[RMDB]
RNA sequence: GGGAACGACUCGAGUAGAGUCGAAAAACAGGCGGAUGAACAAGUGGCGUCUCUACGCCGUGCAGCAGAGAGUUAUAAAAGCGAAGUAUUGGAAUGGAAGAGACGGUAUGAAUUGGCUGUGCGUUCGCACGCCAUCGCUCUUCGGAGCGAUGGCGUGAAAAGAAACAACAACAACAAC
Reactivity to 2A3 in 0.01 (KOAc 150mM, MgCl2 10mM, bicine 150mM(pH8.5), 24C), signal-to-noise 4, nucleotides 027 to 126: a000c030a010g010g020c010g050g020a070u070g050a090a030c070a110a060g020u070g060g050c000g020u050c010u000c050u260a020c030g000c000c000g000u020g000c010a020g000c020a000g060a010g010a000g040u110u110a140u050a240a090a030a010g040c090g040a130a020g010u040a070u030u090g010g060a050a060u080g020g040a040a050g020a020g000a060c000g000g020u130a080u110g090a130a050u060u040g010g010c010u010g060u050g030c000g020u030u000c020g000
Reactivity to DMS in 0.01 (KOAc 150mM, MgCl2 10mM, bicine 150mM(pH8.5), 24C), signal-to-noise 2, nucleotides 027 to 126: a070c060a060g000g010c050g000g010a020u010g040a130a030c090a200a070g000u000g040g020c000g000u040c110u000c090u010a090c060g010c060c000g000u000g020c020a040g000c030a090g000a080g000a080g000u030u020a060u070a080a080a110a030g020c070g020a080a040g030u000a060u020u000g000g000a070a060u000g020g020a060a150g000a080g000a060c030g030g080u040a050u000g010a050a050u020u020g000g020c060u000g000u000g020c110g040u000u010c010g010
Notes: This 177-nucleotide RNA was probed chemically with 2A3 and DMS. The DMS profile rests on 2,408 reads. The reactions ran in a buffer of 150 mM KOAc, 10 mM MgCl2 and 150 mM bicine (pH 8.5), at 24 C. It was measured as part of the RMDB library OK1LIB.